Source: RMDB library OK2TRN, as collected in RNAgym.
An RNA of 177 nucleotides, treated with DMS and read out base by base.
DMS adducts were read by reverse transcription with MarathonRT.
RNA sequence: GGGAACGACUCGAGUAGAGUCGAAAAAUGAGGAUGAUCCUGUCUCCCAGACGGAUGGCCUCUCCCAUGUCGUGGGUCACGAAGACCACGGUCUUCCUGAGGCGCCGUUGGAUCGCGAGGAACUCCUUGUAAGUCCGGCUUUCGAGCCGGACUUACAAAAAGAAACAACAACAACAAC
Reactivity to DMS in 0.01 (KOAc 150mM, MgCl2 10mM, bicine 150mM(pH8.5), 24C), signal-to-noise 1, nucleotides 027 to 126: a100u020g020a060g010g000a080u000g010a090u000c010c000u020g020u020c050u000c010c000c030a290g010a020c010g010g000a040u010g030g010c000c010u020c000u000c010c020c030a110u020g010u010c130g000u000g010g000g010u000c170a130c190g000a040a120g000a030c000c010a050c230g030g000u010c050u000u000c010c140u010g030a010g030g020c000g050c000c050g010u000u000g050g030a050u000c050g010c080g020a100g010g010a110a160c040u000c000c020u000
Conditions: 150 mM KOAc, 10 mM MgCl2 and 150 mM bicine (pH 8.5), 24 C.